[RMDB]
RNA sequence: GGGAACGACUCGAGUAGAGUCGAAAACAAUGAGGCUGAAGACAGUGAUUUGGGACUGAAUUUUGUGUCCUGAAGGCGAGGUAGUUUACAUAUGCAGAGAGGAUAAUAGUAUCAUUGCCUAUGGGAAGCUGUUAUUCAUUUUGAACAGAAAAGUAGAUAUGGUCAGCAUAUUCGUAUGCUGACCAUAAAAAGAAACAACAACAACAAC
Reactivity to 2A3 in 0.01 (KOAc 150mM, MgCl2 10mM, bicine 150mM(pH8.5), 24C), signal-to-noise 2, nucleotides 027 to 156: c070a030a150u130g000a030g000g050c030u010g020a000a010g020a070c080a030g050u040g110a110u020u000u090g010g000g030a010c040u050g100a280a270u070u070u110u160g110u090g010u020c000c000u010g010a010a000g110g040c040g020a010g020g000u030a020g010u060u020u010a080c100a090u120a040u120g050c110a030g010a000g000a000g050g000a010u030a110a040u070a070g020u000a030u150c050a040u070u130g050c000c010u030a060u040g030g000g010a030a040g020c040u060g030u040u030a120u070u020c010a030u050u080u130u170g040a040a000c020a020g070a070a110a010a000g090u130a020g040a100
Reactivity to DMS in 0.01 (KOAc 150mM, MgCl2 10mM, bicine 150mM(pH8.5), 24C), signal-to-noise 1, nucleotides 027 to 156: c060a080a070u020g000a120g010g080c040u000g000a080a190g030a100c050a120g020u000g010a130u000u000u000g000g030g010a140c000u000g020a080a120u000u000u000u030g050u010g000u000c010c040u000g000a020a040g050g050c050g040a100g030g030u000a110g010u000u020u000a040c020a080u000a100u010g020c000a110g030a210g020a100g020g010a130u000a050a030u010a050g020u010a080u000c020a090u000u010g020c030c040u000a120u000g030g020g020a060a160g000c010u010g010u000u010a100u000u000c020a150u000u000u000u000g010a010a150c110a170g010a100a050a020a150g020u010a080g010a150
An RNA of 207 nucleotides, treated with 2A3 and DMS and read out base by base. Values cover nucleotides 27 to 156. Source: RMDB library OK3TST, as collected in RNAgym. 2A3 adducts were read by reverse transcription with SuperScript II with manganese. For DMS, 1,991 sequencing reads were counted. The 2A3 profile rests on 893 reads.